[RMDB]
RNA sequence: GGGAACGACUCGAGUAGAGUCGAAAAAGACUUAUUAUCCUCUCUCAUUGAUUUUUCGCGGGAUACAUCAUCUAUUAUAGCAUCAGCAUCAGAAUCUGUAGGCCGUGUAUCAGCAUCCAUUGUCGUAGACCAACGAGGAGGAGUAUCGUCGGAACUGCCACCGUGGCAGUUUCGACUGCCACGGUGGAAAAGAAACAACAACAACAAC
Reactivity to 2A3 in 0.01 (KOAc 150mM, MgCl2 10mM, bicine 150mM(pH8.5), 24C), signal-to-noise 2, nucleotides 027 to 156: a000g050a000c040u080u070a010u070u130a060u030c000c020u040c010u000c030u000c010a060u000u050g040a090u020u040u020u110u250c000g000c010g000g020g080a020u050a030c000a030u080c020a000u030c020u050a110u190u070a240u210a120g080c050a090u110c060a060g050c020a060u000c040a100g090a230a140u100c070u080g040u030a010g030g040c060c040g000u020g010u050a050u020c020a000g070c000a110u070c070c040a070u030u150g030u090c030g000u020a000g010a040c040c000a000a000c050g020a000g000g000a000g020g000a000g000u000a030u060c070g030u000c000g010g030a050a070c070u150g010